RNA sequence: GGGAACGACUCGAGUAGAGUCGAAAACGUAAGGCAGCAGGGACCUCACUGGCAGAGCAGGGGGCCUGGGAGCAACGUGGAGGCCAGAGCACCCUGAUCCACCAACAUGCCACCUGCAUUCUGACUUCAUGGCUGGCAGUGCCAGGGUCGUGGGAGACAGGGGAGGACUAUUCGUAGUCCUCCCCUGAAAAGAAACAACAACAACAAC
Reactivity to 2A3 in 0.01 (KOAc 150mM, MgCl2 10mM, bicine 150mM(pH8.5), 24C), signal-to-noise 2, nucleotides 027 to 156: c050g050u120a010a060g040g120c130a040g000c020a010g090g040g030a160c000c030u150c060a050c040u030g020g020c030a010g000a010g070c000a000g010g010g010g000g000c000c000u060g000g000g040a120g080c080a110a040c090g000u130g080g060a020g000g080c000c010a000g030a030g000c000a050c000c000c000u000g010a100u010c030c050a020c020c000a020a100c020a120u110g020c020c010a020c000c000u000g040c000a030u200u020c050u040g110a090c070u030u080c110a070u090g010g020c050u020g030g090c070a050g050u010g080c040c000a000g000g000g010u010c010g030u020g000g000g050a110g030a050